[RMDB]
RNA sequence: GGGAACGACUCGAGUAGAGUCGAAAAGGCCGAUCUCAGAUUCUGCACUCUGGGUUCUAGAUACAAAGAUUGUGCAGCACUAACUGCUUUGAGCCAUGUUACCCAGUUAACUGGCGUGAAGCUGUGCAAGACACCUGAGGUUCGCCUCAGGUGUCUUAAAAGAAACAACAACAACAAC
Reactivity to DMS in 0.01 (KOAc 150mM, MgCl2 10mM, bicine 150mM(pH8.5), 24C), signal-to-noise 2, nucleotides 027 to 126: g020g030c090c020g020a040u010c000u020c030a040g010a070u000u000c020u000g000c000a020c040u000c010u000g000g000g030u050u050c120u030a120g020a120u020a140c270a070a090a090g020a080u000u000g000u000g000c040a000g040c300a140c100u000a110a100c100u000g030c000u040u000u030g000a120g000c000c000a000u080g000u000u000a010c000c170c180a150g000u010u000a000a000c000u000g020g000c000g000u000g000a000a050g040c000u010g000u000g000c140
Reactivity to 2A3 in 0.01 (KOAc 150mM, MgCl2 10mM, bicine 150mM(pH8.5), 24C), signal-to-noise 3, nucleotides 027 to 126: g090g010c060c020g000a010u000c040u000c010a000g020a050u130u030c000u090g010c000a000c040u000c000u020g020g000g000u000u010c020u020a040g010a150u190a140c150a110a190a000g140a240u150u160g030u010g060c000a020g080c000a040c080u270a140a000c060u060g050c000u070u000u030g030a030g000c010c010a090u260g000u000u000a030c100c060c070a010g030u050u000a010a000c000u000g000g020c000g050u120g010a000a000g000c010u030g000u040g020c010